[RMDB]
RNA sequence: GGGAACGACUCGAGUAGAGUCGAAAACUAGUAAUCGCGGACUCAUUAAGACGCGAUGAAUACGUCCCUGUUCUUUGUACACACCGCCCGUCGUUAUCGAAGAUGGAGUCAGGCGCGAACAAGCGAGCACAGUACACACGUUCGCGUGUGUACUGUGAAAAGAAACAACAACAACAAC
Reactivity to 2A3 in 0.01 (KOAc 150mM, MgCl2 10mM, bicine 150mM(pH8.5), 24C), signal-to-noise 1, nucleotides 027 to 126: c010u050a010g000u040a030a010u000c010g000c000g080g090a200c010u050c140a160u210u240a150a000g040a000c000g010c020g010a000u000g010a020a000u080a050c040g030u000c020c000c000u000g080u130u010c050u030u070u050g050u100a060c050a000c000a050c060c040g000c000c000c000g000u030c020g060u040u050a080u170c040g040a060a050g020a050u020g000g040a030g020u040c040a070g000g000c010g070c020g010a030a020c010a060a020g020c030g040a010g090
Reactivity to DMS in 0.01 (KOAc 150mM, MgCl2 10mM, bicine 150mM(pH8.5), 24C), signal-to-noise 2, nucleotides 027 to 126: c190u000a010g000u010a180a020u000c000g020c000g010g000a050c020u000c280a110u010u030a090a040g000a150c010g020c010g000a000u000g000a180a100u000a050c120g000u000c030c010c000u000g000u000u000c020u000u000u020g030u020a070c030a040c040a040c050c050g020c020c010c020g020u010c030g020u010u000a100u020c120g000a080a100g010a070u000g000g000a050g000u010c020a110g020g000c030g000c040g010a110a030c060a020a070g010c130g000a100g020